[RMDB]
RNA sequence: GGGAACGACUCGAGUAGAGUCGAAAAGAUAUGGACCAAGCACGAUAAGAUAACAUCGGAAACGAUGUGUAUCUUUUGACGUGCGACGUCCUAAGUCAAAACAUUGUGCCGUUCGCGGCACAAUGAACUAGUCUUGAUGGUUCGCCAUCAAGACUAGAAAAGAAACAACAACAACAAC
Reactivity to 2A3 in 0.01 (KOAc 150mM, MgCl2 10mM, bicine 150mM(pH8.5), 24C), signal-to-noise 3, nucleotides 027 to 126: g030a010u030a010u090g000g000a000c000c020a040a020g030c010a000c020g180a200u130a300a000g000a010u010a020a010c000a000u010c000g020g000a040a050a030c030g000a010u010g030u020g070u050a000u010c000u050u050u060u190g220a060c000g000u000g000c010g000a010c020g000u000c000c000u000a020a000g020u020c030a000a000a120a200c000a000u000u020g000u000g010c000c010g040u080u110c300g060c020g110g000c000a000c000a000a000u010g000a000a030
Reactivity to DMS in 0.01 (KOAc 150mM, MgCl2 10mM, bicine 150mM(pH8.5), 24C), signal-to-noise 4, nucleotides 027 to 126: g000a030u000a240u000g010g000a010c010c030a070a300g000c000a010c010g020a180u000a020a020g010a020u000a020a000c000a000u000c000g010g000a100a040a100c000g020a000u000g000u000g010u000a010u000c000u000u000u000u000g000a130c050g010u000g000c000g000a160c300g020u000c000c000u000a030a070g000u010c020a120a060a100a220c000a000u000u000g010u000g000c000c010g000u000u000c210g030c000g010g020c000a010c000a000a000u000g000a050a140
Structure probing data (2A3 and DMS) for a 177-nucleotide construct. Source: RMDB library TTRDEL, as collected in RNAgym. Conditions: 150 mM KOAc, 10 mM MgCl2 and 150 mM bicine (pH 8.5), 24 C.